RNA sequence: GGGAACGACUCGAGUAGAGUCGAAAAGUUGGCGUGACUGAAGGUCUGGAAGCUGUAGUUGAGCUGGUCUUCAAGAAAGGUAUCGUCGACGGGCUGAAAGAAGACCUGCGGCAUUACGCUGACCAGCGUUAGCGAGGCUCUUCGGAGCCUCGCUAACAAAAGAAACAACAACAACAAC
Reactivity to DMS in 0.01 (KOAc 150mM, MgCl2 10mM, bicine 150mM(pH8.5), 24C), signal-to-noise 1, nucleotides 027 to 126: g020u030u000g000g000c240g060u000g000a300c070u000g000a070a070g050g000u000c040u000g000g000a300a000g040c000u020g040u000a070g000u050u000g000a170g000c000u000g050g000u000c000u000u000c110a170a160g030a070a030a040g020g000u000a000u030c070g030u000c040g000a040c100g000g000g060c060u000g020a140a240a060g110a000a140g020a030c040c000u000g050c060g000g000c160a070u040u120a000c000g080c140u000g000a020c000c000a030g000c080
Reactivity to 2A3 in 0.01 (KOAc 150mM, MgCl2 10mM, bicine 150mM(pH8.5), 24C), signal-to-noise 1, nucleotides 027 to 126: g020u000u000g000g000c080g000u060g000a100c020u090g040a110a070g050g190u120c000u000g000g090a040a040g000c000u040g030u070a100g000u010u060g020a010g040c000u100g000g000u000c000u010u000c070a010a010g190a120a130a030g000g000u050a080u190c010g080u000c020g030a160c070g040g000g040c020u030g070a000a090a130g070a080a000g000a110c000c050u000g090c000g000g000c060a000u000u040a000c070g000c000u050g000a140c050c000a060g000c040